Structure probing data (DMS and 2A3) for a 177-nucleotide construct. In probing experiments dimethyl sulfate is read out at A N1 and C N3, which are open when not base-paired. The 2A3 profile rests on 7,278 reads. For DMS, 8,194 sequencing reads were counted. The RNA was probed in 150 mM KOAc, 10 mM MgCl2 and 150 mM bicine (pH 8.5) at 24 C. It was measured as part of the RMDB library OK2TRN.
RNA sequence: GGGAACGACUCGAGUAGAGUCGAAAAGUCGCCGCGUCCACAUCAACGCCCAGCGCGGGCGAGGGAGGCGUCCUACGGGGGUGACCCAUUCGCCGGCAUGGUAGAGGACGGCAAGAUUGCCGCGACGCAUAUAUCGCUGGUUCGCCAGCGAUAUAUGAAAAGAAACAACAACAACAAC
Reactivity to DMS in 0.01 (KOAc 150mM, MgCl2 10mM, bicine 150mM(pH8.5), 24C), signal-to-noise 6, nucleotides 027 to 126: g010u000c010g010c020c120g020c040g010u000c010c050a120c160a100u000c080a080a140c120g010c060c000c030a120g010c130g030c060g000g000g000c010g010a020g010g000g010a120g010g000c020g010u010c000c010u010a120c180g030g000g010g000g020u000g010a160c030c000c020a190u020u000c020g010c000c000g000g000c030a110u000g010g020u000a110g010a090g000g010a050c020g010g000c060a080a090g000a100u000u010g020c060c060g000c030g010a030c060g000
Reactivity to 2A3 in 0.01 (KOAc 150mM, MgCl2 10mM, bicine 150mM(pH8.5), 24C), signal-to-noise 4, nucleotides 027 to 126: g010u010c000g000c030c030g050c030g030u000c020c010a040c010a150u060c040a110a090c070g030c010c000c020a050g080c300g020c090g160g000g000c010g010a030g060g010g020a280g020g020c020g040u030c010c010u040a140c170g220g010g000g010g030u060g100a230c000c010c000a040u030u030c000g000c000c000g050g000c030a040u050g020g000u060a060g030a060g090g000a010c000g000g000c010a030a020g160a260u140u200g020c030c010g000c000g000a010c020g000